[RMDB]
RNA sequence: GGGAACGACUCGAGUAGAGUCGAAAAUUCCAUUUGAGUAUCCUGAAAACGGGCUUUUCAGCAUGGAACGUACAUAUUAAAUAGUAGGAGUGCAUAGUGGCCCGUAUAGCAUGCAUUAACAUUCCUGAAAACGUGAAAAGGUUCGCCUUUUCACGAAGCUAUAUCAAACCUUCGGGUUUGAUAUAGCAAAAGAAACAACAACAACAAC
Reactivity to 2A3 in 0.01 (KOAc 150mM, MgCl2 10mM, bicine 150mM(pH8.5), 24C), signal-to-noise 3, nucleotides 027 to 156: u020u000c000c000a000u080u050u060g060a050g020u100a060u100c020c010u020g040a040a010a010a060c010g020g000g020c020u170u090u070u080c090a030g000c000a060u060g030g050a110a060c010g050u130a060c040a040u220a070u150u300a160a190a160u150a040g080u020a020g000g130a060g030u000g000c000a020u070a090g090u050g030g000c000c000c000g000u020a010u010a000g010c020a000u020g000c000a020u000u020a040a050c010a050u080u020c000c000u000g020a040a040a090a090c020g000u000g000a030a000a000a010g020g000u020u050c070g090c000c000u000u010u010u000c000a010c010g000a010a000
Reactivity to DMS in 0.01 (KOAc 150mM, MgCl2 10mM, bicine 150mM(pH8.5), 24C), signal-to-noise 1, nucleotides 027 to 156: u000u000c010c000a140u000u000u010g000a130g010u000a110u000c100c010u000g020a060a060a080a090c100g000g030g050c020u000u000u000u000c030a200g000c060a020u000g010g010a040a020c070g020u010a100c050a070u020a130u000u010a090a030a140u010a160g040u000a080g010g010a150g020u000g000c000a100u010a140g000u010g030g030c000c020c000g050u000a050u000a110g020c130a110u020g000c020a090u000u000a070a070c010a170u000u000c020c020u000g000a180a070a070a250c020g010u000g000a000a000a030a030g000g030u000u010c300g020c000c000u020u000u000u000c020a000c020g000a010a040